[RMDB]
RNA sequence: GGGAACGACUCGAGUAGAGUCGAAAAUAAGUCUAGUUCGCUAGACUUACUAUCGGGAAAACACCCUCCCGGCUCGAUCAGGCGGAUUCCGUCCAAGCGCUGCAACACACGUAUUCGUACGUGUGAAGUAAAAGCAGGUAUUCGUACCUGCUUUUACAAAAGAAACAACAACAACAAC
Reactivity to 2A3 in 0.01 (KOAc 150mM, MgCl2 10mM, bicine 150mM(pH8.5), 24C), signal-to-noise 5, nucleotides 027 to 126: u050a000a000g000u010c000u010a000g020u020u050c170g020c100u000a000g000a000c000u000u000a030c010u040a050u100c020g010g010g040a030a070a050a080c110a130c010c000c000u030c010c010c010g020g010c030u030c040g050a080u090c050a040g020g020c040g070g100a270u280u060c020c030g030u010c040c020a110a050g020c070g030c110u070g030c030a080a070c010a020c000a000c010g000u010a010u050u110c260g030u030a010c000g000u000g000u000g030a030a000
Reactivity to DMS in 0.01 (KOAc 150mM, MgCl2 10mM, bicine 150mM(pH8.5), 24C), signal-to-noise 5, nucleotides 027 to 126: u000a010a000g000u000c000u000a010g000u000u020c190g030c000u000a000g000a010c000u000u000a010c100u000a080u000c070g000g000g000a070a060a110a100c150a110c040c020c040u000c010c010c000g010g000c080u000c040g010a080u000c160a100g010g020c020g000g000a160u000u010c050c030g010u000c020c070a090a100g000c050g020c070u000g010c100a100a230c010a000c000a010c000g010u010a020u010u020c170g010u000a010c000g030u000g020u000g000a010a080
Chemical mapping of a 177-nucleotide RNA with 2A3 and DMS. The RNA was probed in 150 mM KOAc, 10 mM MgCl2 and 150 mM bicine (pH 8.5) at 24 C. Source: RMDB library M2PK50, as collected in RNAgym. For 2A3 the reverse transcriptase was SuperScript II with manganese.